Structure probing data (2A3) for a 177-nucleotide construct. It was measured as part of the RMDB library OK1LIB. Reactivities are given for positions 27 through 126. The reactions ran in a buffer of 150 mM KOAc, 10 mM MgCl2 and 150 mM bicine (pH 8.5), at 24 C. As a SHAPE reagent, 2A3 marks flexible, mostly unpaired nucleotides at the ribose 2'-OH.
[RMDB]
RNA sequence: GGGAACGACUCGAGUAGAGUCGAAAAUUGCACUUCACCAGUCCAUGCUGAACUCUCAAGCCAUCGACAAUCUGAGAGCAAGCCUGGAAACUACUAAUCAGGCAAUUGAGGCAAUCAGACAAGCAGGUCAGCCCCCUAUCUUCGGAUAGGGGGCUGAAAAAGAAACAACAACAACAAC
Reactivity to 2A3 in 0.01 (KOAc 150mM, MgCl2 10mM, bicine 150mM(pH8.5), 24C), signal-to-noise 1, nucleotides 027 to 126: u200u140g010c000a000c100u030u000c050a040c020c040a110g000u000c000c000a180u110g000c030u000g000a180a070c000u060c000u010c030a040a040g090c020c000a200u100c010g080a000c030a050a140u000c080u000g000a040g000a030g010c040a010a000g070c000c000u000g020g000a130a040a000c000u300a100c000u060a020a030u040c030a000g000g010c000a000a110u060u240g050a070g020g000c000a000a180u000c040a040g000a000c050a040a010g090c020a000g000g100